[RMDB]
RNA sequence: GGGAACGACUCGAGUAGAGUCGAAAAGGAGGAGGUCUGCCCAAUUUCCCUUAUAUCCUUACCACGGCAGACUUCGAAGGGCUUGAGAAAGGGAAAUUGGUGGUAAGGAUAUGUCUCAAGCCUUUGACUACUGGUUUGUAUUCGUACAAACCAGUAGAAAAGAAACAACAACAACAAC
Reactivity to 2A3 in 0.01 (KOAc 150mM, MgCl2 10mM, bicine 150mM(pH8.5), 24C), signal-to-noise 2, nucleotides 027 to 126: g100g030a050g010g060a020g000g050u000c010u000g030c010c030c030a010a040u030u010u010c000c010c030u050u200a300u030a020u160c000c010u010u020a000c000c000a020c040g000g000c020a010g000a020c000u010u000c010g040a030a050g040g000g010c010u010u010g010a010g020a080a070a060g000g050g070a050a040a030u100u110g090g030u010g010g000u000a000a010g010g000a000u030a060u080g030u000c000u000c010a000a000g000c010c010u020u010u030g000a000
Reactivity to DMS in 0.01 (KOAc 150mM, MgCl2 10mM, bicine 150mM(pH8.5), 24C), signal-to-noise 3, nucleotides 027 to 126: g010g010a190g010g020a080g010g010u010c000u000g020c010c000c170a050a280u000u000u000c010c010c000u010u000a140u010a080u000c010c010u010u000a020c010c010a080c080g020g020c020a030g000a030c030u000u000c070g000a070a050g000g000g020c000u000u010g000a010g000a060a090a100g030g020g010a040a040a050u000u000g030g030u000g000g010u000a010a010g010g010a030u000a060u010g000u000c000u000c000a000a000g000c010c000u000u000u010g000a270